Structure probing data (DMS and 2A3) for a 177-nucleotide construct.
2A3 adducts were read by reverse transcription with SuperScript II with manganese.
The RNA was probed in 150 mM KOAc, 10 mM MgCl2 and 150 mM bicine (pH 8.5) at 24 C.

RNA sequence: GGGAACGACUCGAGUAGAGUCGAAAAGACCGCUGAAUGCGGAAGUACUAGAUCAACUAGAAAGUAGAUUAAUACAAAAGCUACGUCUCGAAACUAGUUGAUCUAGUACAAUCGAGACGUAGUAAGAACCUAGCCUACGUUUCGACGUAGGCUAGGUAAAAGAAACAACAACAACAAC
Reactivity to DMS in 0.01 (KOAc 150mM, MgCl2 10mM, bicine 150mM(pH8.5), 24C), signal-to-noise 2, nucleotides 027 to 126: g000a120c000c070g000c000u020g000a100a070u030g000c020g000g000a080a090g000u000a110c000u000a040g000a010u000c000a010a000c000u030a060g000a170a140a120g000u000a060g000a230u010u000a140a030u030a050c240a180a100a130a130g030c000u000a020c060g000u000c000u020c030g030a060a150a140c040u000a030g000u000u020g000a060u030c000u000a010g030u020a070c160a060a090u000c000g010a000g000a020c000g020u030a000g000u000a000a070g000a120
Reactivity to 2A3 in 0.01 (KOAc 150mM, MgCl2 10mM, bicine 150mM(pH8.5), 24C), signal-to-noise 2, nucleotides 027 to 126: g000a050c020c010g000c070u150g230a260a080u300g000c000g020g000a010a010g040u000a040c020u000a000g000a000u030c000a010a000c000u010a000g060a250a220a000g170u150a020g120a220u000u180a130a080u250a230c100a030a050a000a020g010c000u030a000c030g010u000c000u000c000g180a130a130a070c080u040a000g000u040u000g000a030u000c000u000a000g000u000a000c000a000a000u020c000g000a000g000a000c030g000u000a040g000u060a000a120g020a060